Structure probing data (DMS and 2A3) for a 170-nucleotide construct. The data come from the RNA Mapping Database (RMDB), library 15KLIB. The RNA was probed in 150 mM KOAc, 10 mM MgCl2 and 150 mM bicine (pH 8.5) at 24 C. For 2A3 the reverse transcriptase was SuperScript II with manganese. For DMS, 5,543 sequencing reads were counted.

RNA sequence: GGGAACGACUCGAGUAGAGUCGAAAAUUCGGAUCCAAAGGAGAAAACUACCGGCGGAGGGUGAUCCACUCGGAGUUGGACGGGAAAAGCACAUCCAGAGGACCCCUUCGACGAACAGAAGGAUCUGCAGGCUGUCCGUUCGCGGACAGCAAAAGAAACAACAACAACAAC
Reactivity to DMS in 0.01 (KOAc 150mM, MgCl2 10mM, bicine 150mM(pH8.5), 24C), signal-to-noise 2, nucleotides 027 to 129: u040u000c010g000g000a010u010c010c000a070a130a140g050g080a110g030a090a020a080a150c080u030a110c080c060g010g040c100g080g000a010g020g000g020u050g000a130u000c000c000a150c000u020c140g040g000a070g000u000u010g030g010a150c000g090g040g020a050a050a070a130g000c140a090c090a180u010c000c000a150g000a090g020g000a030c040c050c010c040u020u020c000g010a040c030g030a100a110c090a100g050a240a100g000g000a030u000c010u020g010c130a070g030
Reactivity to 2A3 in 0.01 (KOAc 150mM, MgCl2 10mM, bicine 150mM(pH8.5), 24C), signal-to-noise 4, nucleotides 027 to 129: u150u070c020g000g000a000u000c000c000a080a000a010g210g030a100g100a050a110a080a110c030u070a150c070c000g000g000c000g000g020a000g010g000g020u040g040a300u000c030c000a040c020u000c050g000g020a010g050u180u060g070g060a090c100g040g040g050a070a160a020a000g050c050a020c010a170u020c000c000a000g010a040g050g000a010c000c000c000c000u000u000c040g030a030c000g030a060a020c050a060g110a140a040g000g000a020u020c000u030g050c000a010g020
DMS adducts were read by reverse transcription with MarathonRT. For 2A3, 5,554 sequencing reads were counted.